[RMDB]
Chemical mapping of a 207-nucleotide RNA with 2A3 and DMS. DMS adducts were read by reverse transcription with MarathonRT. The DMS profile rests on 1,493 reads. The RNA was probed in 150 mM KOAc, 10 mM MgCl2 and 150 mM bicine (pH 8.5) at 24 C. The data come from the RNA Mapping Database (RMDB), library OK3TST. 2A3 adducts were read by reverse transcription with SuperScript II with manganese.
RNA sequence: GGGAACGACUCGAGUAGAGUCGAAAAAUAGUAGCCAGCUGUGAUAAAUGUCAGCUAAAAGGAGAAGCCAUGCAUGGACAAGUAGACUGUAGUCCAGGAAUAUGGCAACUAGAUUGUACACAUUUAGAAGGAAAAGUUAUCCUGGUAGCAGUUCAUGUCCAAGAUACGAGUUCGCUCGUAUCUUGGAAAAAGAAACAACAACAACAAC
Reactivity to 2A3 in 0.01 (KOAc 150mM, MgCl2 10mM, bicine 150mM(pH8.5), 24C), signal-to-noise 2, nucleotides 027 to 156: a000u070a010g100u020a010g080c050c030a000g000c010u040g010u050g070a120u160a250a160a030u160g100u190c040a000g000c040u050a070a070a000a140g040g010a100g030a090a020g050c060c030a000u050g000c020a080u020g080g000a070c000a070a060g050u050a010g070a090c050u080g040u210a030g050u040c000c000a000g010g040a060a060u250a040u170g060g000c040a010a010c010u020a020g010a180u040u120g050u160a030c050a000c010a040u040u070u080a060g030a120a090g030g060a000a070a000a050g030u090u060a030u030c000c010u000g000g020u080a050g010c020a020g000u150u120c030a110u190g070
Reactivity to DMS in 0.01 (KOAc 150mM, MgCl2 10mM, bicine 150mM(pH8.5), 24C), signal-to-noise 1, nucleotides 027 to 156: a140u030a150g020u010a180g030c010c020a070g040c030u010g020u000g010a230u000a060a120a110u010g010u010c050a050g000c060u000a080a050a040a080g000g000a120g030a160a100g000c050c020a020u000g040c070a100u000g000g000a060c020a090a280g050u000a090g020a120c040u000g030u000a130g000u000c010c000a030g000g000a080a170u000a080u020g030g030c040a070a060c050u010a070g010a150u000u000g090u020a140c040a020c110a070u000u010u010a110g000a090a070g010g010a040a040a140a150g020u000u000a080u020c000c000u030g000g040u000a180g020c000a030g000u000u000c040a010u010g020